Structure probing data (DMS) for a 177-nucleotide construct. It was measured as part of the RMDB library OK1LIB. The DMS profile rests on 4,963 reads. Conditions: 150 mM KOAc, 10 mM MgCl2 and 150 mM bicine (pH 8.5), 24 C.

[RMDB]
RNA sequence: GGGAACGACUCGAGUAGAGUCGAAAAUAAGGGGAUUUAUUAUCUAACUUGGGCGGGUGAUUUAGUGACUCCAGCGCGUAUUAGUUAGAUUAUGAAUACGUUGAAUAGAUUACGCGCAAAGUAACAAGGGUAUAUUAUACUUCGGUAUAAUAUACCCAAAAGAAACAACAACAACAAC
Reactivity to DMS in 0.01 (KOAc 150mM, MgCl2 10mM, bicine 150mM(pH8.5), 24C), signal-to-noise 3, nucleotides 027 to 126: u040a020a030g000g010g000g000a030u000u010u000a020u010u000a010u000c000u000a000a020c000u000u010g000g010g000c130g010g020g000u010g000a040u060u010u000a060g060u050g010a080c010u000c050c070a100g000c010g000c000g000u010a020u000u010a060g000u000u000a050g000a070u020u030a160u030g030a110a120u020a130c210g000u000u010g000a120a090u030a070g000a030u010u000a010c000g010c020g000c030a080a020a050g010u020a030a070c210a080a120